[RMDB]
Overview
The data come from the RNA Mapping Database (RMDB), library M2RFPK. An RNA of 207 nucleotides, treated with 2A3 and read out base by base. 2A3 adducts were read by reverse transcription with SuperScript II with manganese.
RNA sequence: GGGAACGACUCGAGUAGAGUCGAAAAGACGCCUUUAGAAGAAGAGGCUAGGGGGUAUUCCGGUGUGGGAUACGUAGUAAUAUGCAACGCUAAUUGCAUAAGAUUGUAGGACGGAAUUUACAGUCUUUAGAGAUAAGCACGUUCGCGUGCUUAUCAACUCUCAGCUGAUCUUCGGAUCAGCUGAGAGAAAAGAAACAACAACAACAAC
Reactivity to 2A3 in 0.01 (KOAc 150mM, MgCl2 10mM, bicine 150mM(pH8.5), 24C), signal-to-noise 1, nucleotides 027 to 156: g050a010c050g020c000c000u020u060u120a150g040a220a020g040a030a020g010a050g050g010c060u100a060g000g010g000g020g040u030a050u010u020c020c010g090g080u220g070u170g020g010g000a020u050a050c030g000u040a040g020u030a060a130u040a010u080g030c000a020a010c070g040c130u060a050a100u060u000g000c000a000u000a100a040g020a040u040u030g010u030a000g000g100a020c100g000g050a040a060u130u070u010a080c010a000g000u000c000u010u030u090a080g000a000g000a010u000a000a000g000c000a000c010g020u040u080c140g010c010g100u010g040c000u000u000a000u010c000a000a000
The RNA was probed in 150 mM KOAc, 10 mM MgCl2 and 150 mM bicine (pH 8.5) at 24 C.